[RMDB]
RNA sequence: GGGAACGACUCGAGUAGAGUCGAAAAGGCUGAUCAGGCUAUGACUUCUAUGUAUAAGCAAGCACGUGCUGAAGACAAGAAAGCAAAAAUUGUCAGUGCUAUGCAAACUAUGUUGUUUGGUAUGAUUAACGGACGAGCUUCGGCUCGUCCAAAAGAAACAACAACAACAAC
Reactivity to 2A3 in 0.01 (KOAc 150mM, MgCl2 10mM, bicine 150mM(pH8.5), 24C), signal-to-noise 1, nucleotides 027 to 129: g000g000c000u000g000a020u140c120a170g000g000c000u010a040u050g000a000c000u070u000c130u070a080u000g300u000a050u000a120a000g000c000a000a000g040c000a000c070g000u220g000c060u050g130a140a000g000a000c000a000a000g050a240a000a000g000c000a020a000a010a010a020u000u060g210u190c000a000g090u000g000c020u010a300u020g000c000a080a000a000c030u000a080u190g000u000u000g000u090u130u000g040g040u000a150u180g040a000u000u130a000a000c090
Annotation:
Structure probing data (2A3) for a 170-nucleotide construct. For 2A3, 1,105 sequencing reads were counted. Conditions: 150 mM KOAc, 10 mM MgCl2 and 150 mM bicine (pH 8.5), 24 C.